[RMDB]
RNA sequence: GGGAACGACUCGAGUAGAGUCGAAAAUACCUUCACAAACCACUCUGUUCUACUUAAAUCUUAACAGUUCCUGGAGGAAACUUUGAGAUUACUCUUCAGAGCUUACUUUGGUGGUUGGGGUGUGUUGUAUGGCUUUGUGUGUGUGUGUGUGUGUGUGCGAUCUAUGGUGAUUCGUCACCAUAGAUCGAAAAGAAACAACAACAACAAC
Reactivity to 2A3 in 0.01 (KOAc 150mM, MgCl2 10mM, bicine 150mM(pH8.5), 24C), signal-to-noise 2, nucleotides 027 to 156: u070a020c000c000u090u240c090a030c030a100a090a010c030c030a000c000u130c030u070g040u070u070c040u110a080c070u170u220a090a100a090u010c020u020u070a080a080c050a120g020u000u020c020c030u170g150g000a130g030g000a040a070a040c040u040u040u060g010a040g010a040u040u180a080c030u140c040u170u110c050a020g010a000g070c030u080u090a070c020u180u070u070g040g000u020g000g010u050u030g090g030g020g000u030g000u020g010u050u060g070u040a160u070g050g010c060u050u050u020g020u050g000u010g000u010g010u000g030u020g000u000g000u010g000u000g010u020g000u020g040
Chemical mapping of a 207-nucleotide RNA with 2A3. For 2A3, 857 sequencing reads were counted. 2A3 adducts were read by reverse transcription with SuperScript II with manganese.